[RMDB]
RNA sequence: GGGAACGACUCGAGUAGAGUCGAAAAUUUGAGUCCUUAGAGUUUACUGAAUUGUCUUUUACUAAUUACAAGCUCCAGUCUCAGAUUGUAACUGGCCUUUUUAAAGAUUGCUCUAGAGAAACUUCUGCUGCGUGCUGCUUCGGCAGCACGAAAAGAAACAACAACAACAAC
Reactivity to DMS in 0.01 (KOAc 150mM, MgCl2 10mM, bicine 150mM(pH8.5), 24C), signal-to-noise 1, nucleotides 027 to 129: u020u010u100g080a100g070u040c000c080u000u000a210g010a150g030u000u000u000a070c140u030g030a120a050u010u040g030u000c060u070u010u050u000a170c260u020a050a140u020u050a030c130a150a040g000c000u010c040c020a080g010u050c020u050c040a070g020a150u000u100g040u000a010a020c010u010g000g020c130c000u020u020u010u070u020a040a070a030g000a130u000u060g010c050u000c020u010a120g030a080g000a070a050a090c190u000u020c030u060g010c160u000g010
Reactivity to 2A3 in 0.01 (KOAc 150mM, MgCl2 10mM, bicine 150mM(pH8.5), 24C), signal-to-noise 3, nucleotides 027 to 129: u130u040u080g050a020g020u050c000c000u000u030a060g000a040g110u140u080u010a050c030u040g010a050a090u100u040g030u000c010u040u030u000u080a230c090u100a080a150u160u100a030c060a060a030g000c000u090c000c020a080g100u030c000u000c000a030g000a130u100u100g030u000a020a010c000u000g000g040c020c010u120u070u010u000u070a060a040a020g020a070u120u080g000c000u010c040u050a020g000a000g060a070a160a000c000u040u020c030u030g040c010u040g000